[RMDB]
RNA sequence: GGGAACGACUCGAGUAGAGUCGAAAACAGCGGCCACAACAUGAACCCUGUCUUCAUAUACAUGGUGCCGAAGCCCUGCCCCCGCGUGCGUAUCGUGCUCCCAGGUUUGUGCGCUCGGCCGGUACGCCAUGCUGGACUGAUUCGUCAGUCCAGCAUGAAAAGAAACAACAACAACAAC
Reactivity to 2A3 in 0.01 (KOAc 150mM, MgCl2 10mM, bicine 150mM(pH8.5), 24C), signal-to-noise 1, nucleotides 027 to 126: c020a000g030c030g000g000c070c010a050c020a160a050c020a060u080g060a060a070c050c070c070u040g050u100c030u110u060c050a060u150a020u040a170c090a060u120g050g000u060g150c060c050g040a040a020g030c000c000c020u050g010c030c000c000c000c000g020c040g020u030g000c010g030u020a020u030c020g030u170g010c010u040c030c010c000a020g030g080u030u090u100g100u030g000c040g000c010u030c020g000g000c000c020g000g010u000a010c000g020c010
Reactivity to DMS in 0.01 (KOAc 150mM, MgCl2 10mM, bicine 150mM(pH8.5), 24C), signal-to-noise 3, nucleotides 027 to 126: c070a100g010c100g020g010c020c060a030c070a070a060c130a080u000g010a090a090c040c050c040u000g000u000c100u000u020c080a060u000a060u010a090c110a060u010g010g020u000g020c030c050g010a120a120g000c050c010c010u000g000c030c000c010c010c020g010c130g020u010g010c000g020u000a010u000c010g000u020g030c030u000c020c030c020a160g000g010u000u000u010g000u000g000c050g010c060u010c090g000g030c000c000g010g010u000a010c020g010c030